[RMDB]
The record gives the reactivity of an RNA of 177 nucleotides to DMS and 2A3. The data come from the RNA Mapping Database (RMDB), library OK2TST. The RNA was probed in 150 mM KOAc, 10 mM MgCl2 and 150 mM bicine (pH 8.5) at 24 C. For 2A3 the reverse transcriptase was SuperScript II with manganese. Reactivities are given for positions 27 through 126. The DMS profile rests on 1,181 reads.
RNA sequence: GGGAACGACUCGAGUAGAGUCGAAAAGCCGCCACAUCACUAUGACCAGAUUUUCACGGCCCAUGGCGUGAUCAUGAUCUUCUUCGUGGCGAUGCCUUUCAUUGUCGGCCUGAUGAAUUUCGUGGUACACUGAGUGCGGAUUCGUCCGCACUCAGUGAAAAGAAACAACAACAACAAC
Reactivity to DMS in 0.01 (KOAc 150mM, MgCl2 10mM, bicine 150mM(pH8.5), 24C), signal-to-noise 2, nucleotides 027 to 126: g000c030c060g020c020c050a040c080a100u010c150a090c180u000a060u020g000a050c050c020a030g020a030u000u010u010u010c030a070c050g030g000c020c020c160a150u000g010g020c010g090u010g010a030u030c100a060u020g000a010u010c300u000u010c090u000u000c030g020u000g010g020c130g010a030u000g010c040c050u000u010u000c140a180u000u000g020u010c160g010g030c010c000u020g000a070u000g020a030a010u000u000u000c020g050u000g020g010u000a160
Reactivity to 2A3 in 0.01 (KOAc 150mM, MgCl2 10mM, bicine 150mM(pH8.5), 24C), signal-to-noise 2, nucleotides 027 to 126: g040c010c060g080c000c040a120c000a070u120c040a040c080u160a100u250g040a010c000c020a040g030a000u020u000u010u040c010a000c030g060g000c000c000c030a070u100g010g000c050g050u120g060a110u000c010a010u030g020a020u030c040u170u010c000u070u020c180g010u000g010g010c000g020a030u090g000c000c000u110u150u200c110a130u070u120g110u090c070g060g030c000c000u250g060a300u020g000a070a050u010u050u030c110g120u010g060g000u020a050